RNA sequence: GGGAACGACUCGAGUAGAGUCGAAAAGAUUUUGUUGAAAAUCCCAGUGUUAUUGGUGUUUAUCAUAAACUUGGAGAACGUGUACGCCAAGCUAUCUUAAACACUGUUAAAUUUUGUGACCACAUGGCUACGCUCGGGUUCGCCCGAGCGAAAAGAAACAACAACAACAAC
Reactivity to DMS in 0.01 (KOAc 150mM, MgCl2 10mM, bicine 150mM(pH8.5), 24C), signal-to-noise 3, nucleotides 027 to 129: g020a030u020u000u020u020g000u130u070g030a030a030a050a050u080c000c080c000a180g030u000g030u000u030a090u050u000g000g000u040g010u060u000u000a020u040c150a000u020a000a110a210c030u040u060g000g060a100g020a060a130c100g010u000g020u040a120c120g010c030c030a070a060g060c170u020a000u060c090u000u050a000a000a140c000a020c020u020g000u060u030a020a070a040u040u030u020u070g040u000g000a050c110c000a040c150a000u010g000g000c070u020a000
Reactivity to 2A3 in 0.01 (KOAc 150mM, MgCl2 10mM, bicine 150mM(pH8.5), 24C), signal-to-noise 1, nucleotides 027 to 129: g050a010u130u180u010u010g080u090u100g000a000a070a070a120u050c000c000c000a040g010u000g020u100u030a100u050u220g010g000u050g030u010u000u110a000u000c040a000u000a000a000a080c000u000u000g000g000a050g000a290a030c090g010u250g070u150a030c000g000c000c000a000a000g070c020u010a000u000c000u000u040a070a000a000c030a000c000u000g060u080u070a000a000a100u050u050u010u020g020u080g000a000c000c000a100c000a010u040g000g000c000u050a050